RNA sequence: GGGAACGACUCGAGUAGAGUCGAAAAAAAAGAUAUGGACUGACGGGAGCGUUACGGGACGACGAAGAGAAUCGGAAACGAUUCUCAGAGUCCCAGUAACGCGAGGAUCGUCAGUCCUAAGUCAAAAUCUUACGGAAUGGUUCGCCAUUCCGUAAGAAAAAGAAACAACAACAACAAC
Reactivity to DMS in 0.01 (KOAc 150mM, MgCl2 10mM, bicine 150mM(pH8.5), 24C), signal-to-noise 2, nucleotides 027 to 126: a080a020a080a090g000a050u010a300u000g010g000a020c010u000g000a000c010g000g010g000a030g030c020g000u000u000a000c010g000g000g000a050c060g010a130c240g040a120a100g000a020g000a020a000u000c010g010g000a190a080a130c010g020a000u000u000c000u010c000a020g010a280g020u010c000c000c010a010g010u000a000a010c010g010c000g000a060g020g010a040u010c010g020u000c010a000g010u000c000c000u000a010a050g000u000c040a080a090a120a060